[RMDB]
RNA sequence: GGGAACGACUCGAGUAGAGUCGAAAAGAUAUGGACCGACCCUGCAACAGCAUAGGUAUCGGAAACGAUACUAUGACAUGCAGGUGUCGGUCCUAAGUCAAAAGGACUAAAGUUCGCUUUAGUCCAACUCUCACCAGUACUUCGGUACUGGUGAGAGAAAAGAAACAACAACAACAAC
Reactivity to DMS in 0.01 (KOAc 150mM, MgCl2 10mM, bicine 150mM(pH8.5), 24C), signal-to-noise 1, nucleotides 027 to 126: g010a010u010a300u000g000g020a030c000c010g000a010c000c030c000u000g020c010a110a010c300a180g000c050a010u000a030g030g030u030a010u010c000g000g000a120a060a150c000g020a030u000a020c010u000a000u000g000a030c150a300u000g000c000a000g020g000u000g020u000c000g010g010u010c000c000u000a030a050g000u000c000a070a150a160a120g010g000a010c000u020a000a000a000g010u020u040c300g050c000u030u000u000a050g000u000c000c020a080a030
Reactivity to 2A3 in 0.01 (KOAc 150mM, MgCl2 10mM, bicine 150mM(pH8.5), 24C), signal-to-noise 1, nucleotides 027 to 126: g000a010u050a000u110g000g010a010c000c000g030a010c000c010c000u010g000c210a300a140c060a300g000c000a000u050a020g300g100u040a040u000c010g010g030a000a010a030c010g000a000u000a030c020u050a000u020g100a080c070a150u300g000c020a000g000g000u020g000u010c000g000g000u000c000c000u000a030a000g020u000c000a010a000a070a080g000g000a000c000u020a000a000a000g020u030u200c300g080c150u040u000u020a010g000u000c000c000a010a000
An RNA of 177 nucleotides, treated with DMS and 2A3 and read out base by base.
2A3 adducts were read by reverse transcription with SuperScript II with manganese.
For DMS the reverse transcriptase was MarathonRT.
The RNA was probed in 150 mM KOAc, 10 mM MgCl2 and 150 mM bicine (pH 8.5) at 24 C.
The DMS profile rests on 1,034 reads.